[RMDB]
RNA sequence: GGGAACGACUCGAGUAGAGUCGAAAAGUUAAACAAGGCCAUUUUAUUGGUGUUGAGGGUGAACUACCUGUAGCUGUAGUCAAUGAUAAGAUCUUCACCAAGAGUGGCGUUAAUGACAUUUGUAUGUACCCGAGCAGGUUCGCCUGCUCGAAAAGAAACAACAACAACAAC
Reactivity to 2A3 in 0.01 (KOAc 150mM, MgCl2 10mM, bicine 150mM(pH8.5), 24C), signal-to-noise 6, nucleotides 027 to 129: g020u020u030a100a120a010c090a060a030g140g020c000c000a040u000u010u040u130a290u040u010g000g000u020g010u000u020g030a030g000g140g040u100g070a110a020c000u000a000c010c000u120g190u270a050g030c220u110g010u000a020g000u020c030a050a080u170g110a090u100a100a060g080a070u000c000u000u000c020a000c000c000a020a000g020a010g020u000g000g000c020g000u030u050a020a020u010g010a000c020a060u070u060u060g180u060a220u120g040u060a020c000c020
Reactivity to DMS in 0.01 (KOAc 150mM, MgCl2 10mM, bicine 150mM(pH8.5), 24C), signal-to-noise 6, nucleotides 027 to 129: g030u040u020a060a040a150c140a020a000g020g060c000c040a040u000u010u000u010a160u000u000g020g030u030g010u000u040g020a000g040g050g060u020g000a020a070c000u050a020c030c050u080g060u030a120g030c230u040g040u010a100g020u000c030a140a090u040g030a070u060a110a110g010a150u010c020u000u030c000a020c010c030a030a000g010a040g030u030g010g010c030g020u020u030a030a170u050g030a040c040a000u040u030u030g020u040a070u020g030u000a090c020c020